Record summary:
Chemical mapping of a 177-nucleotide RNA with 2A3 and DMS. For 2A3, 7,033 sequencing reads were counted. For DMS the reverse transcriptase was MarathonRT. The reactions ran in a buffer of 150 mM KOAc, 10 mM MgCl2 and 150 mM bicine (pH 8.5), at 24 C. High 2A3 reactivity points to a flexible backbone, as in loops and unpaired stretches.
RNA sequence: GGGAACGACUCGAGUAGAGUCGAAAAACGGUGCCGCCCGACAGGACACGCUCAGCCCCUGACACGCUCGGCUCUGCGCGCCUGAGACCAGCACCGAGAGGAGACAGCGGUGAGCGCGGCAAAGGCCCACCAAGAGAUGGUUCGCCAUCUCUUGGUGAAAAGAAACAACAACAACAAC
Reactivity to 2A3 in 0.01 (KOAc 150mM, MgCl2 10mM, bicine 150mM(pH8.5), 24C), signal-to-noise 6, nucleotides 027 to 126: a000c020g040g030u050g020c010c010g040c010c010c010g030a040c050a090g060g030a050c030a040c090g000c010u030c030a110g120c000c000c000c010u020g030a030c020a010c080g050c010u030c020g000g040c050u000c020u040g070c060g010c000g030c020c040u110g040a090g040a100c020c010a020g020c010a010c000c010g010a020g010a020g050g040a070g020a030c030a020g000c000g010g020u020g030a040g020c040g000c010g010g000c010a060a050a020g060g010c010c000
Reactivity to DMS in 0.01 (KOAc 150mM, MgCl2 10mM, bicine 150mM(pH8.5), 24C), signal-to-noise 4, nucleotides 027 to 126: a140c050g010g030u000g030c020c030g020c040c020c040g030a130c170a060g010g030a090c100a100c070g010c010u000c050a090g020c010c000c060c050u010g000a120c050a090c080g000c050u000c040g010g030c080u000c020u000g020c110g000c080g020c050c050u010g000a080g000a120c070c030a070g000c040a130c010c020g000a070g000a060g020g000a140g010a120c110a050g030c220g000g000u010g000a040g020c020g000c020g000g000c050a030a120a100g000g000c020c040